Chemical mapping of a 207-nucleotide RNA with 2A3.
[RMDB]
RNA sequence: GGGAACGACUCGAGUAGAGUCGAAAAAUACGACGAGUAAGAUCACGGAGUGUUGAACCUACAAUCUGAUACUUACCCAUAGGUGUAGAGGUAAGCCCUUUCUUGUAAGCAUACGUGUUCUUAGGUAGGCGUGGUUUAACAUACCGACCAUACUCUCGGUACUACGGAACUUCGGUUCCGUAGUACCAAAAGAAACAACAACAACAAC
Reactivity to 2A3 in 0.01 (KOAc 150mM, MgCl2 10mM, bicine 150mM(pH8.5), 24C), signal-to-noise 3, nucleotides 027 to 156: a000u180a000c030g010a000c020g010a000g060u000a030a110g000a070u090c040a020c040g000g030a110g030u010g040u030u050g060a020a080c040c030u060a110c090a110a050u140c110u060g050a020u090a190c000u000u010a020c010c040c030a110u220a180g100g060u170g030u110a050g050a040g050g000u020a030a000g000c030c020c040u100u140u060c080u010u090g030u120a040a020g040c020a010u040a050c060g070u070g010u110u050c020u080u040a040g030g050u030a000g000g030c030g020u030g000g040u030u000u040a010a020c040a030u080a030c010c040g010a010c010c030a040u060a060c070u010c030u010c110
The data come from the RNA Mapping Database (RMDB), library OK3TST. Conditions: 150 mM KOAc, 10 mM MgCl2 and 150 mM bicine (pH 8.5), 24 C. 2A3 adducts were read by reverse transcription with SuperScript II with manganese.